Source information:
The record gives the reactivity of an RNA of 177 nucleotides to 2A3 and DMS. The RNA was probed in 150 mM KOAc, 10 mM MgCl2 and 150 mM bicine (pH 8.5) at 24 C. It was measured as part of the RMDB library 15KREP. 2A3 adducts were read by reverse transcription with SuperScript II with manganese. For DMS the reverse transcriptase was MarathonRT. The 2A3 profile rests on 3,588 reads.
RNA sequence: GGGAACGACUCGAGUAGAGUCGAAAAUCAUCCCACUGUGUGCUUCAAAUAAACUUCGCGUUGUAAUUCCUGACUUCACCGUCUGGAAUCAGGUAGUCACAUAUCCCUCGCUUAACUACGCUGGGGCCACUACGCAAAAGUUCGCUUUUGCGUAGUGAAAAGAAACAACAACAACAAC
Reactivity to 2A3 in 0.01 (KOAc 150mM, MgCl2 10mM, bicine 150mM(pH8.5), 24C), signal-to-noise 3, nucleotides 027 to 126: u080c010a010u010c000c020c000a020c030u070g020u010g020u030g030c000u090u020c050a130a140a250u180a090a090a010c010u050u060c110g040c050g110u070u040g090u110a030a060u010u010c000c000u010g010a020c010u030u030c070a030c040c020g020u000c020u030g010g000a000a000u030c010a000g000g060u030a020g060u070c000a010c000a030u090a090u070c000c000c010u010c010g010c030u080u050a120a050c030u080a040c070g000c020u020g000g000g010g000c020
Reactivity to DMS in 0.01 (KOAc 150mM, MgCl2 10mM, bicine 150mM(pH8.5), 24C), signal-to-noise 4, nucleotides 027 to 126: u010c250a160u000c000c000c010a130c150u000g030u010g010u010g020c010u000u000c060a060a090a120u000a080a080a070c010u000u010c100g020c060g030u000u000g010u000a080a120u000u000c010c010u000g000a030c010u000u000c300a070c270c210g010u010c020u000g000g010a010a020u000c090a070g010g010u000a020g000u000c060a030c070a070u000a060u020c010c000c010u010c150g010c030u010u010a070a110c120u020a080c100g010c050u000g000g000g020g010c300